[RMDB]
RNA sequence: GGGAACGACUCGAGUAGAGUCGAAAAUAAGAGAGAAUGCCACAACAGAAAGCAACGCACAGUGAAAUCAGGAUUAAGGACUGGCAGCCCGUGGGAGCUCCAGCCCGGUUCGGGCAUAUACGCCAAAGUCGAGUGUCUGCUUCGGUGGAUAUUCGACAAAAGAAACAACAACAACAAC
Reactivity to DMS in 0.01 (KOAc 150mM, MgCl2 10mM, bicine 150mM(pH8.5), 24C), signal-to-noise 9, nucleotides 027 to 126: u040a080a100g010a120g000a050g010a050a040u010g000c020c010a040c080a120a070c080a060g010a060a080a100g010c080a060a060c150g010c050a040c050a050g010u010g010a060a070a090u010c070a050g000g000a060u010u020a080a100g010g010a050c030u000g000g000c040a080g010c020c020c030g020u020g000g000g000a130g000c040u010c050c040a060g000c000c000c000g010g010u020u010c020g000g000g000c020a080u030a070u020a070c150g000c020c030a050a070a100
Reactivity to 2A3 in 0.01 (KOAc 150mM, MgCl2 10mM, bicine 150mM(pH8.5), 24C), signal-to-noise 9, nucleotides 027 to 126: u160a030a020g090a000g010a000g030a080a030u050g020c010c010a050c040a140a040c020a040g090a090a110a000g070c030a040a040c050g020c020a030c010a030g020u040g100a050a040a060u070c020a020g040g010a020u070u090a090a050g040g010a020c010u010g020g000c020a010g010c000c010c010g040u110g010g030g010a060g020c010u000c020c010a030g000c000c000c000g020g010u100u100c030g000g000g000c010a010u040a020u020a110c090g010c020c010a060a030a010
An RNA of 177 nucleotides, treated with DMS and 2A3 and read out base by base.
For 2A3, 68,013 sequencing reads were counted.
Conditions: 150 mM KOAc, 10 mM MgCl2 and 150 mM bicine (pH 8.5), 24 C.